[RMDB]
RNA sequence: GGGAACGACUCGAGUAGAGUCGAAAACCUCCACGGCGCCUGAUUUUGUAGCAUUUAAUGUCUUUCAGGGCAUUGAAACGGCUGUUGGCCAUUAUGUUCAUGCUCGCCUGAAGGGUGGUCUUAUUUUAACGUAGGCUCUUCGGAGCCUACAAAAGAAACAACAACAACAAC
Reactivity to DMS in 0.01 (KOAc 150mM, MgCl2 10mM, bicine 150mM(pH8.5), 24C), signal-to-noise 2, nucleotides 027 to 129: c030c030u020c070c060a110c060g040g000c120g050c120c010u050g030a130u010u040u050u080g070u050a060g000c100a160u010u080u010a120a040u010g070u000c020u000u200u000c080a080g030g050g010c000a040u000u000g000a020a130a100c170g030g000c020u000g050u030u000g040g000c000c070a200u010u090a130u040g030u000u040c110a030u100g000c030u060c120g020c080c040u030g050a060a080g000g000g000u060g030g000u010c070u000u070a090u000u000u000u000a090a070c000
Reactivity to 2A3 in 0.01 (KOAc 150mM, MgCl2 10mM, bicine 150mM(pH8.5), 24C), signal-to-noise 4, nucleotides 027 to 129: c020c000u050c000c020a050c050g000g000c040g030c000c000u070g100a110u020u090u040u140g170u090a010g030c030a060u000u000u110a060a070u040g010u020c020u020u190u040c050a070g000g090g000c010a000u040u050g000a010a020a000c050g010g000c010u030g110u290u130g080g000c000c010a070u140u180a100u210g050u060u110c000a010u030g020c020u050c030g010c000c000u000g030a000a000g000g000g000u000g000g000u000c040u140u200a220u080u250u000u070a050a000c050
The record gives the reactivity of an RNA of 170 nucleotides to DMS and 2A3.
2A3 adducts were read by reverse transcription with SuperScript II with manganese.
High DMS reactivity at an A or C suggests that its Watson-Crick edge is free.
It was measured as part of the RMDB library 15KLIB.